[RMDB]
RNA sequence: GGGAACGACUCGAGUAGAGUCGAAAAGAGGAUUCAACGAGCUUCGUAGCAACGAUAGCAACGUAGCUUUUGCUACGACCCUAGCUAUCGAGGGUAGCUACGUCCCGUGCUCGAGGGAAGAAUCCGACGAGGACUCAUAGUUCGCUAUGAGUCCUCGAAAAGAAACAACAACAACAAC
Reactivity to 2A3 in 0.01 (KOAc 150mM, MgCl2 10mM, bicine 150mM(pH8.5), 24C), signal-to-noise 2, nucleotides 027 to 126: g120a030g020g000a010u010u000c030a060a090c060g010a000g010c000u040u040c000g010u000a010g000c020a050a050c000g010a000u000a010g010c000a010a030c000g000u000a000g000c010u130u160u190u300g000c000u010a010c020g160a180c040c010c030u050a080g000c000u000a000u000c000g030a070g050g130g080u110a050g010c000u000a000c010g040u030c020c030c040g040u070g000c000u000c000g010a070g170g100g020a060a200g000a030a020u000c000c010g030a010
Reactivity to DMS in 0.01 (KOAc 150mM, MgCl2 10mM, bicine 150mM(pH8.5), 24C), signal-to-noise 2, nucleotides 027 to 126: g030a170g000g000a030u010u000c010a110a150c000g000a040g010c030u030u000c000g020u000a020g010c000a110a110c020g010a010u000a000g020c010a140a190c030g010u010a010g010c010u000u000u000u000g020c010u000a000c010g000a150c110c110c150u010a130g000c000u000a000u000c010g020a070g000g000g020u000a120g000c000u000a000c010g000u010c090c090c100g020u000g000c020u000c000g020a080g020g000g000a120a150g000a000a020u000c000c000g010a120